[RMDB]
Source: RMDB library M2PK50, as collected in RNAgym. An RNA of 177 nucleotides, treated with DMS and 2A3 and read out base by base. The RNA was probed in 150 mM KOAc, 10 mM MgCl2 and 150 mM bicine (pH 8.5) at 24 C. DMS adducts were read by reverse transcription with MarathonRT. Values cover nucleotides 27 to 126.
RNA sequence: GGGAACGACUCGAGUAGAGUCGAAAACUUUGAACGUUCGCGUUCAAAGAAACCUCUAAGCAGAUUGGCGAGGACGACGCUGCGGAGCGCGUUUGGCAAUAAAAAGCGUAGGCUUCGGCCUACGCAACGGUAUCGAUUUGUUCGCAAAUCGAUACCGAAAAGAAACAACAACAACAAC
Reactivity to DMS in 0.01 (KOAc 150mM, MgCl2 10mM, bicine 150mM(pH8.5), 24C), signal-to-noise 1, nucleotides 027 to 126: c000u000u010u000g010a000a000c000g000u010u000c240g000c010g050u000u000c000a000a020a020g000a040a120a130c000c040u000c130u020a060a190g000c010a050g000a130u010u000g010g020c010g000a160g000g000a110c080g010a090c050g000c010u000g040c110g050g000a090g020c060g000c000g000u010u010u000g010g020c030a080a060u000a060a070a110a080a070g030c000g000u010a020g000g050c000u000u000c240g020g000c010c000u000a000c000g010c000a000a010
Reactivity to 2A3 in 0.01 (KOAc 150mM, MgCl2 10mM, bicine 150mM(pH8.5), 24C), signal-to-noise 1, nucleotides 027 to 126: c010u000u000u000g000a000a000c000g040u050u050c170g000c000g080u000u000c050a000a000a000g000a020a010a000c010c000u000c040u100a130a110g130c050a080g060a300u090u130g090g000c010g050a030g000g030a030c030g000a050c000g040c040u050g070c060g080g030a020g000c100g000c020g020u000u070u070g040g040c040a060a060u080a220a090a040a030a000g000c000g010u000a000g000g000c020u010u030c130g080g000c000c010u000a000c000g000c000a000a000